This 177-nucleotide RNA was probed chemically with DMS and 2A3. For 2A3 the reverse transcriptase was SuperScript II with manganese.
RNA sequence: GGGAACGACUCGAGUAGAGUCGAAAAGAUAUGGACAAGCUACCCACCUUGAGAGUAGCGAAGAACUGCUGUAAUAUCGGAAACGAUAUUACAGCAGGGAGCUAUGGUAAGAGGCUUGUCCUAAGUCGAAUAUUCAAUUGUUCGCAAUUGAAUAUUCAAAAGAAACAACAACAACAAC
Reactivity to DMS in 0.01 (KOAc 150mM, MgCl2 10mM, bicine 150mM(pH8.5), 24C), signal-to-noise 7, nucleotides 027 to 126: g020a170u010a120u010g010g010a010c010a020a000g010c020u000a160c020c010c030a300c100c010u010u000g010a160g010a220g020u000a010g000c010g010a100a110g010a110a230c000u000g000c000u000g000u000a010a010u000a000u000c010g000g000a150a090a200c000g010a010u000a000u000u000a000c000a010g010c000a000g000g000g010a080g010c000u000a010u000g010g020u020a030a020g010a130g020g000c000u000u000g000u010c000c000u000a030a100g000u010c180
Reactivity to 2A3 in 0.01 (KOAc 150mM, MgCl2 10mM, bicine 150mM(pH8.5), 24C), signal-to-noise 6, nucleotides 027 to 126: g110a070u300a190u290g010g000a000c010a010a020g000c020u220a300c010c010c020a050c030c020u130u050g280a280g040a040g300u050a000g000c030g060a080a010g030a060a040c010u010g000c000u010g000u000a010a000u000a000u010c010g000g020a110a090a030c020g000a000u010a010u010u010a000c000a000g000c000a010g010g000g000a010g000c010u010a020u130g060g110u250a050a020g010a020g040g010c000u000u010g000u000c000c000u030a070a010g260u170c090
For DMS, 10,890 sequencing reads were counted. DMS (dimethyl sulfate) methylates the pairing face of unpaired adenines and cytosines.